The record gives the reactivity of an RNA of 177 nucleotides to 2A3 and DMS. The RNA was probed in 150 mM KOAc, 10 mM MgCl2 and 150 mM bicine (pH 8.5) at 24 C. The DMS profile rests on 3,392 reads. Values are in units of 0.01, from 0 to 300, in steps of 10.
RNA sequence: GGGAACGACUCGAGUAGAGUCGAAAAUGAGAAUACUUUUAGUACAAGCGAGUACACGCAGUAUAGUGCCACUUGUGUGAGAAUACUUUUAGUACAAGCGAGUACACGCUCUAUACUGCCACUUGUGCCUAGCGAUAAGGUUCGCCUUAUCGCUAGGAAAAGAAACAACAACAACAAC
Reactivity to 2A3 in 0.01 (KOAc 150mM, MgCl2 10mM, bicine 150mM(pH8.5), 24C), signal-to-noise 7, nucleotides 027 to 126: u230g030a060g090a130a080u180a180c040u040u050u080u170a090g060u070a030c030a110a030g020c010g050a020g030u140a060c050a010c100g000c000a000g000u000a000u000a010g020u020g010c020c020a010c020u010u020g010u020g030u060g080a100g130a150a060u100a110c020u050u160u090u220a060g020u030a020c020a070a010g010c010g020a000g040u090a050c030a010c070g000c000u010c000u000a000u000a000c000u000g000c000c010a000c000u000u000g010u020g020
Reactivity to DMS in 0.01 (KOAc 150mM, MgCl2 10mM, bicine 150mM(pH8.5), 24C), signal-to-noise 3, nucleotides 027 to 126: u060g000a230g000a120a130u030a080c020u030u000u040u070a060g010u000a120c090a040a030g000c030g020a080g000u030a030c150a190c270g010c030a000g000u010a000u000a010g010u010g000c020c250a050c000u000u020g000u020g010u030g000a160g020a030a210u010a040c000u000u070u040u110a080g030u000a000c000a070a270g050c080g000a020g010u020a080c100a110c300g010c000u000c000u000a020u000a010c000u000g000c000c090a070c000u000u020g000u000g040
2A3 adducts were read by reverse transcription with SuperScript II with manganese.